Structure probing data (DMS and 2A3) for a 177-nucleotide construct. DMS adducts were read by reverse transcription with MarathonRT. It was measured as part of the RMDB library OK2TRN. The DMS profile rests on 2,969 reads.
RNA sequence: GGGAACGACUCGAGUAGAGUCGAAAAGCCCAAGAGGGGCCUGUCCGUGAACAACGUGAGGAAGUACCUGUCCCUGUGGCCCAGAAGCAAGGAGAAGGGGAGAUAGAGGAUGGACUGUCUCGGCAGGCUAAUGCGUUACCUUCGGGUAACGCAUUAGAAAAGAAACAACAACAACAAC
Reactivity to DMS in 0.01 (KOAc 150mM, MgCl2 10mM, bicine 150mM(pH8.5), 24C), signal-to-noise 3, nucleotides 027 to 126: g010c010c000c000a100a130g000a130g020g010g010g010c020c010u000g010u010c020c040g010u010g010a110a060c110a060a070c070g010u000g030a110g010g010a110a070g010u000a100c100c010u010g000u000c000c010c010u010g030u000g010g000c030c020c020a090g000a120a170g010c110a110a070g000g020a100g000a170a160g000g010g010g010a040g000a070u000a050g020a130g000g000a080u000g000g000a080c050u000g000u000c020u010c010g000g000c030a030g000g010
Reactivity to 2A3 in 0.01 (KOAc 150mM, MgCl2 10mM, bicine 150mM(pH8.5), 24C), signal-to-noise 1, nucleotides 027 to 126: g020c020c020c010a010a020g110a060g010g160g000g000c020c000u040g100u090c030c040g000u020g050a090a100c080a040a040c150g080u120g050a080g020g050a050a010g010u120a170c020c000u040g090u030c010c010c010u040g050u000g240g000c000c000c000a010g080a050a010g050c140a050a110g130g040a120g160a050a040g030g000g060g010a060g010a000u090a010g130a040g030g020a010u040g010g000a010c020u040g030u030c010u020c010g000g020c010a000g000g010
The reactions ran in a buffer of 150 mM KOAc, 10 mM MgCl2 and 150 mM bicine (pH 8.5), at 24 C.